Overview:
Chemical mapping of a 177-nucleotide RNA with DMS. The reactions ran in a buffer of 150 mM KOAc, 10 mM MgCl2 and 150 mM bicine (pH 8.5), at 24 C.

RNA sequence: GGGAACGACUCGAGUAGAGUCGAAAAGGUUAUUUCUGAUCCGCGCGGCCAGAUCGUCUAUGCCAAUCAGGCCUAUGCCAGAAUGACCGGUGCAACGGAUGCCGAUGGCAUUCGCCCGCUCGAUCAAACUGGAGCUUUUAUUCGUAAAAGCUCCAGUAAAAGAAACAACAACAACAAC
Reactivity to DMS in 0.01 (KOAc 150mM, MgCl2 10mM, bicine 150mM(pH8.5), 24C), signal-to-noise 2, nucleotides 027 to 126: g000g010u010u010a010u010u000u000c000u000g020a090u000c190c200g020c080g040c270g000g000c010c020a080g020a010u000c060g000u000c090u000a140u000g020c170c020a040a060u000c010a090g010g000c010c010u000a170u000g000c040c000a040g000a060a070u000g000a010c000c000g020g020u020g010c110a170a230c040g020g010a020u010g000c010c010g000a200u010g030g000c010a010u000u000c000g020c030c140c060g030c050u010c090g030a070u010c250a060a110